[RMDB]
RNA sequence: GGGAACGACUCGAGUAGAGUCGAAAAACAACAGAUAGCUGGAACCAGCGUAGAAUUCUACGCAUAUCCAUAGCGAAUGGUACCUGUAAAGAAAAUAAGUUUGGAUGUACAAGUACCAACAGCCGAACAUGCCAUGGUGAUGUCAAUCACAUAUGCACUACCAUGCCGUGUUCGCACGGCAUGGUAGAAAAGAAACAACAACAACAAC
Reactivity to 2A3 in 0.01 (KOAc 150mM, MgCl2 10mM, bicine 150mM(pH8.5), 24C), signal-to-noise 1, nucleotides 027 to 156: a000c090a020a060c070a020g090a110u110a060g060c000u050g010g050a180a130c060c050a040g000c010g000u000a000g000a120a300u250u050c000u020a000c000g000c050a020u060a050u010c000c010a070u140a010g070c000g000a110a100u000g010g010u000a010c000c000u000g040u060a000a130a060g070a060a040a000a090u110a010a120g010u050u020u060g100g000a050u020g000u060a000c000a030a160g000u000a070c000c020a000a070c020a100g000c020c020g020a010a000c070a020u080g070c120c060a020u040g010g070u020g000a040u000g160u090c030a090a040u040c000a050c020a100u120a010u100g050c000a000

Chemical mapping of a 207-nucleotide RNA with 2A3. Conditions: 150 mM KOAc, 10 mM MgCl2 and 150 mM bicine (pH 8.5), 24 C. It was measured as part of the RMDB library OK3TST. 2A3 adducts were read by reverse transcription with SuperScript II with manganese.